[RMDB]
RNA sequence: GGGAACGACUCGAGUAGAGUCGAAAAAUAAGGAAGAAAGCGAAAACGGUAGAGAAAUUAUCAGGACUAACUUCAAUAAAACAGUUUACGCUUCUAGAGGUACAGGCGAAUUGUGGUCCCCAUAAAAUGCCAUAAAAUUAUUCGUAAUUUUAUGGCAAAAAGAAACAACAACAACAAC
Reactivity to 2A3 in 0.01 (KOAc 150mM, MgCl2 10mM, bicine 150mM(pH8.5), 24C), signal-to-noise 1, nucleotides 027 to 126: a000u060a000a000g090g060a000a110g000a040a060a000g030c030g010a000a060a000a000c040g010g000u100a060g010a000g030a080a090a000u050u030a060u080c040a070g050g050a020c010u010a030a020c010u000u000c000a010a010u170a090a090a000a000c010a020g010u100u070u040a020c000g010c020u000u010c010u080a000g010a020g180g000u050a050c000a020g000g040c030g000a010a010u020u050g050u010g020g010u050c020c000c000c010a010u300a020a030a300a040
Reactivity to DMS in 0.01 (KOAc 150mM, MgCl2 10mM, bicine 150mM(pH8.5), 24C), signal-to-noise 3, nucleotides 027 to 126: a070u020a120a060g000g020a110a080g020a070a090a040g000c020g000a080a050a050a030c080g000g030u000a060g010a270g000a040a030a050u010u010a030u000c100a100g000g010a090c180u000a050a050c050u000u000c020a050a090u010a070a070a110a020c060a070g000u000u000u000a130c050g020c000u000u000c060u010a070g010a080g010g000u000a050c110a050g000g020c060g020a050a070u000u000g020u000g030g000u000c010c010c000c110a050u000a040a050a060a130

The record gives the reactivity of an RNA of 177 nucleotides to 2A3 and DMS. For 2A3 the reverse transcriptase was SuperScript II with manganese. Values cover nucleotides 27 to 126.